[RMDB]
RNA sequence: GGGAACGACUCGAGUAGAGUCGAAAAAGAUGAAGUGGAUGUGGGUGUCGAUGCCGCCGGCGGUGACGAUCAUGCCUUCGCCGGCGAUGAUCUCGGUGGCGGCGCCGAUAACGAUGUCGACGCCGGGGUUUCAUUGGAGGUUCGCCUCCAAUGAAACAAAAGAAACAACAACAACAAC
Reactivity to DMS in 0.01 (KOAc 150mM, MgCl2 10mM, bicine 150mM(pH8.5), 24C), signal-to-noise 3, nucleotides 027 to 126: a080g000a060u010g000a060a090g000u000g000g010a030u000g020u020g040g000g020u000g000u010c030g010a010u010g010c050c030g010c000c010g000g010c020g010g020u020g020a030c070g010a080u030c200a090u020g000c030c030u000u020c230g010c080c050g000g010c000g000a010u000g000a050u000c020u000c000g000g010u000g010g000c040g000g000c000g030c050c010g020a160u010a060a160c100g010a080u010g020u010c000g000a030c000g010c010c000g000g000g010
Reactivity to 2A3 in 0.01 (KOAc 150mM, MgCl2 10mM, bicine 150mM(pH8.5), 24C), signal-to-noise 2, nucleotides 027 to 126: a000g120a060u150g030a110a010g020u070g060g030a080u070g060u140g100g040g000u030g020u040c020g010a030u110g030c020c000g000c000c000g010g010c010g020g080u070g060a040c040g000a030u140c020a030u150g010c010c000u030u070c030g010c060c000g000g010c020g000a000u010g000a010u020c020u000c020g130g090u010g010g020c020g000g000c020g020c000c010g050a060u060a060a090c100g030a050u110g000u010c000g010a000c010g040c010c000g010g000g000
Source: RMDB libraries RFM100 and RFMREP, as collected in RNAgym. This 177-nucleotide RNA was probed chemically with DMS and 2A3. For DMS the reverse transcriptase was MarathonRT. The reactions ran in a buffer of 150 mM KOAc, 10 mM MgCl2 and 150 mM bicine (pH 8.5), at 24 C. Values cover nucleotides 27 to 126.